[RMDB]
RNA sequence: GGGAACGACUCGAGUAGAGUCGAAAAAAUACAUUAGUGAUCCUAUAAGUGACUGGUAGUCCUUUUCGUUAAUAGGCUUGCAAUUAGGAUCAGUACACUUAACUUGGAAAUUUGCCUCCAAAGGCGAGCAUGAUGGCAUAUUCGUAUGCCAUCAUGCAAAAGAAACAACAACAACAAC
Reactivity to DMS in 0.01 (KOAc 150mM, MgCl2 10mM, bicine 150mM(pH8.5), 24C), signal-to-noise 1, nucleotides 027 to 126: a100a140u000a070c040a080u000u000a070g020u010g010a100u020c000c010u000a070u010a030a010g010u000g010a050c000u030g000g020u000a210g010u010c000c000u000u010u010u010c110g020u000u000a080a030u030a080g000g020c180u000u010g000c030a040a010u000u000a050g040g000a000u000c000a030g000u000a110c060a010c040u000u000a020a080c170u010u030g000g020a110a110a140u010u020u000g000c060c000u000c130c100a060a140a040g000g010c040g010a070
Reactivity to 2A3 in 0.01 (KOAc 150mM, MgCl2 10mM, bicine 150mM(pH8.5), 24C), signal-to-noise 1, nucleotides 027 to 126: a000a000u230a010c070a050u000u170a030g160u050g100a060u000c000c000u040a040u010a150a000g010u000g010a000c000u060g050g120u070a040g050u100c000c010u000u030u030u080c060g030u000u040a070a040u040a160g070g140c030u030u030g050c000a000a030u020u000a020g000g050a070u250c000a000g010u030a080c000a010c000u000u050a060a060c040u040u060g090g080a030a150a020u120u060u090g050c010c040u070c040c040a080a100a050g000g000c040g020a020

The data come from the RNA Mapping Database (RMDB), library OK2TST. Structure probing data (DMS and 2A3) for a 177-nucleotide construct. The reactions ran in a buffer of 150 mM KOAc, 10 mM MgCl2 and 150 mM bicine (pH 8.5), at 24 C. For DMS the reverse transcriptase was MarathonRT.